Overview
Chemical mapping of a 177-nucleotide RNA with 2A3 and DMS. High DMS reactivity at an A or C suggests that its Watson-Crick edge is free. For DMS, 1,149 sequencing reads were counted. Reactivities are given for positions 27 through 126.

RNA sequence: GGGAACGACUCGAGUAGAGUCGAAAAACGAUGAACUUGAAGACGUACUCCAAGGCCUUGAAUGUCCGCAUGAGUGGCUCGCAGGGCUCUCCCUGGCUCGCAUGGUCCACGUACUGCGUCAGCACCGCGCUAGUUUGGGAUUCGUCCCAAACUAGCGAAAAGAAACAACAACAACAAC
Reactivity to 2A3 in 0.01 (KOAc 150mM, MgCl2 10mM, bicine 150mM(pH8.5), 24C), signal-to-noise 2, nucleotides 027 to 126: a010c070g010a060u150g050a030a020c020u050u060g060a070a010g050a030c030g000u040a080c030u000c020c000a080a060g060g000c040c010u130u120g110a250a050u080g060u070c020c030g010c060a070u150g070a030g020u060g010g000c030u000c060g060c070a090g010g000g000c010u010c000u040c000c010c000u000g040g000c000u010c040g030c060a040u150g030g000u010c010c010a050c060g010u070a040c050u030g020c000g020u020c020a010g060c060a040c010c000g030
Reactivity to DMS in 0.01 (KOAc 150mM, MgCl2 10mM, bicine 150mM(pH8.5), 24C), signal-to-noise 1, nucleotides 027 to 126: a140c060g010a100u000g010a180a040c050u000u000g010a090a080g020a050c070g020u000a100c040u010c020c050a050a120g010g010c050c040u000u010g000a100a110u000g010u000c060c020g020c050a030u000g000a140g000u010g000g000c000u010c110g030c040a140g050g000g010c020u000c050u000c000c020c020u000g020g000c040u010c040g000c050a090u000g030g000u000c020c000a070c060g000u000a160c180u000g000c000g000u000c060a060g010c090a100c050c050g010